[RMDB]
RNA sequence: GGGAACGACUCGAGUAGAGUCGAAAAUGUGGGCCUUCAUGCCAAAGUGCCACUGAUUGCCUUUCUUGGUCUGAUGCAUCUCCGGAUCGCGUUGCUGCUCUUUGUUCUUGGUCGAGCUGGGUGCCUCCAAGAACCUAAGAUUCGUCUUAGGUUCUUGAAAAGAAACAACAACAACAAC
Reactivity to DMS in 0.01 (KOAc 150mM, MgCl2 10mM, bicine 150mM(pH8.5), 24C), signal-to-noise 9, nucleotides 027 to 126: u010g020u000g010g010g010c030c030u000u000c060a060u010g010c060c050a070a090a100g020u010g000c010c020a050c050u000g000a090u000u000g010c030c030u000u000u000c040u000u000g020g000u000c050u010g010a100u010g010c060a070u000c030u000c070c050g010g000a070u000c060g010c090g010u000u000g010c040u000g010c030u000c050u000u010u000g010u000u000c030u000u000g010g010u000c060g010a090g010c040u000g000g010g010u000g000c030c020u000c090
Reactivity to 2A3 in 0.01 (KOAc 150mM, MgCl2 10mM, bicine 150mM(pH8.5), 24C), signal-to-noise 5, nucleotides 027 to 126: u180g020u110g010g020g020c020c000u030u030c030a040u130g010c020c020a190a160a030g150u230g060c020c000a050c030u030g030a090u040u090g030c010c000u050u130u070c030u050u080g080g030u060c060u030g050a060u100g020c010a060u020c020u020c050c030g080g030a090u060c050g000c040g100u090u080g000c030u020g020c000u010c000u050u090u110g070u070u030c030u060u070g030g010u060c050g010a020g010c020u030g000g010g050u060g010c000c000u050c030